[RMDB]
RNA sequence: GGGAACGACUCGAGUAGAGUCGAAAAAUGCCGGAUGAGGUCCGCGCGAAGCUGUGCAAGGUGAGGGCGUUUUGUCGUCGCGACACGGAAGACGCGGAAACAAAAGGCGAAGCGCUGAAACUCUUCCGGGAAGCCAUGAGCCUGAACCCGGGCGCAGUACUAGUCGUAAAUUCGUUUACGACUAGUAAAAAGAAACAACAACAACAAC
Reactivity to 2A3 in 0.01 (KOAc 150mM, MgCl2 10mM, bicine 150mM(pH8.5), 24C), signal-to-noise 5, nucleotides 027 to 156: a010u090g030c010c000g000g010a030u050g040a020g000g070u000c030c020g030c000g000c010g150a080a020g030c020u070g020u140g120c110a090a090g100g040u110g070a110g010g190g000c040g010u040u040u050u150g140u070c040g010u020c020g020c090g170a100c050a020c100g030g030a030a000g020a020c020g010c020g060g000a040a090a020c040a030a050a010a010g030g000c030g030a070a020g050c020g000c030u040g020a070a080a100c010u010c000u040u000c000c000g000g000g010a020a000g030c030c010a090u110g060a010g030c000c000u030g060a080a130c010c000c000g020g010g000c020g000c010a010g030
Reactivity to DMS in 0.01 (KOAc 150mM, MgCl2 10mM, bicine 150mM(pH8.5), 24C), signal-to-noise 2, nucleotides 027 to 156: a120u000g010c020c030g000g000a060u000g020a060g030g050u000c000c000g010c040g030c000g030a120a300g040c010u000g020u000g010c060a120a050g050g000u000g000a170g000g020g020c000g030u000u000u000u010g050u020c010g030u010c020g020c020g000a130c050a070c020g000g020a080a100g020a120c000g030c020g000g010a100a110a150c060a020a050a080a180g000g020c010g010a090a250g010c070g030c030u000g020a100a060a060c020u000c020u000u000c000c020g020g010g010a080a150g040c070c050a110u000g000a070g030c010c000u010g000a090a140c010c020c000g000g000g010c030g000c030a070g000
Conditions: 150 mM KOAc, 10 mM MgCl2 and 150 mM bicine (pH 8.5), 24 C. This 207-nucleotide RNA was probed chemically with 2A3 and DMS. Reactivities are given for positions 27 through 156. The 2A3 profile rests on 3,730 reads. For DMS the reverse transcriptase was MarathonRT.